Source: RMDB library OK1LIB, as collected in RNAgym.
An RNA of 177 nucleotides, treated with 2A3 and read out base by base.
For 2A3 the reverse transcriptase was SuperScript II with manganese.
[RMDB]
RNA sequence: GGGAACGACUCGAGUAGAGUCGAAAAAAGCCUGCUAGUAGCCUCGCCAAGGUGGACUACUCGUCGGCAUACCUGGAGCAGACCCACGCCUUCGGCGAACUGAUCCGCAACGUCGAUCAAUCCACCCUGGGGAUGCGGAGUUCGCUCCGCAUCCCCAAAAAGAAACAACAACAACAAC
Reactivity to 2A3 in 0.01 (KOAc 150mM, MgCl2 10mM, bicine 150mM(pH8.5), 24C), signal-to-noise 1, nucleotides 027 to 126: a000a010g140c050c010u020g040c060u000a060g120u140a040g000c000c000u020c010g000c010c080a090a070g060g000u040g000g000a040c000u020a000c000u070c080g040u040c030g000g030c000a020u060a150c000c060u000g000g000a000g040c000a010g000a300c040c040c040a050c090g000c050c000u240u170c170g000g000c020g000a020a060c000u000g020a000u010c020c020g060c030a170a090c120g140u090c000g000a020u040c020a030a020u020c010c000a000c000c000c030